[RMDB]
RNA sequence: GGGAACGACUCGAGUAGAGUCGAAAAUAAAAGAGCGUACGACUCACAAAGACUGUACGACAGUCUGACUCUCUCGUACGCUUGUUCAACGAGAGACAGAGUGCGUUGGAACAAGUGUGAAAAAAAAGUCUCUCUAUGUGUUCGCACAUAGAGAGACAAAAGAAACAACAACAACAAC
Reactivity to 2A3 in 0.01 (KOAc 150mM, MgCl2 10mM, bicine 150mM(pH8.5), 24C), signal-to-noise 1, nucleotides 027 to 126: u170a010a090a020a020g050a000g050c040g030u080a040c030g060a080c010u000c030a030c020a000a140a010g000a000c000u040g000u160a080c160g170a160c180a010g030u040c000u010g000a040c010u030c000u010c000u000c010g020u040a010c010g020c000u010u060g010u030u000c010a010a000c000g020a020g000a000g040a060c050a170g090a040g110u150g050c000g000u010u050g110g010a020a010c050a070a040g050u060g020u090g090a100a000a000a000a000a000a080a050
Reactivity to DMS in 0.01 (KOAc 150mM, MgCl2 10mM, bicine 150mM(pH8.5), 24C), signal-to-noise 2, nucleotides 027 to 126: u000a070a120a060a150g030a050g010c000g020u000a000c020g010a050c030u000c020a070c060a090a140a000g000a010c000u010g040u010a150c190g010a140c080a010g020u000c000u000g000a300c200u000c010u000c070u000c000g010u000a010c020g010c000u010u000g010u010u000c040a040a040c090g010a060g000a080g000a150c110a130g000a060g010u020g030c020g000u000u010g000g000a080a020c070a020a030g000u000g000u000g010a010a000a000a110a050a020a110a180
Notes:
An RNA of 177 nucleotides, treated with 2A3 and DMS and read out base by base. Values cover nucleotides 27 to 126. The DMS profile rests on 1,282 reads. For 2A3, 1,292 sequencing reads were counted. The RNA was probed in 150 mM KOAc, 10 mM MgCl2 and 150 mM bicine (pH 8.5) at 24 C. The data come from the RNA Mapping Database (RMDB), library M2PK90. For DMS the reverse transcriptase was MarathonRT.